[RMDB]
Chemical mapping of a 177-nucleotide RNA with DMS and 2A3. For 2A3, 6,696 sequencing reads were counted. Values cover nucleotides 27 to 126.
RNA sequence: GGGAACGACUCGAGUAGAGUCGAAAAGUGGUCGAGUGCGAAGCACUGGGGUAGAGAAAUAAAUAGAUAGAGAUCUACCCCGUCAGUCAGUCACUCUCUGUCUGAAUCUCUCUCUCAAAGACCACGAAUCACCUCAGUAGUUCGCUACUGAGGUGAUAAAAGAAACAACAACAACAAC
Reactivity to DMS in 0.01 (KOAc 150mM, MgCl2 10mM, bicine 150mM(pH8.5), 24C), signal-to-noise 4, nucleotides 027 to 126: g020u000g000g020u000c020g000a030g020u000g010c020g010a110a120g010c130a030c040u040g000g000g000g000u040a010g010a020g000a070a070a080u050a070a100a140u060a050g020a040u000a050g000a040g000a120u020c060u010a060c040c030c000c030g020u020c060a050g020u020c070a040g000u020c180a120c130u020c060u020c000u010g000u010c020u010g020a060a120u020c040u010c000u000c020u010c010u000c040a070a090a130g000a010c000c000a010c020g020a080
Reactivity to 2A3 in 0.01 (KOAc 150mM, MgCl2 10mM, bicine 150mM(pH8.5), 24C), signal-to-noise 7, nucleotides 027 to 126: g000u010g000g000u020c010g010a030g010u020g020c110g120a100a020g030c080a020c100u070g000g000g010g000u040a010g040a000g080a050a130a090u250a040a140a030u120a040g160a060u070a040g120a020g010a070u010c000u020a030c000c030c000c000g000u020c000a010g000u000c000a000g010u040c060a050c140u100c020u010c010u020g010u000c000u010g050a140a130u020c020u000c000u000c000u000c000u000c040a060a090a000g000a000c000c000a000c000g000a000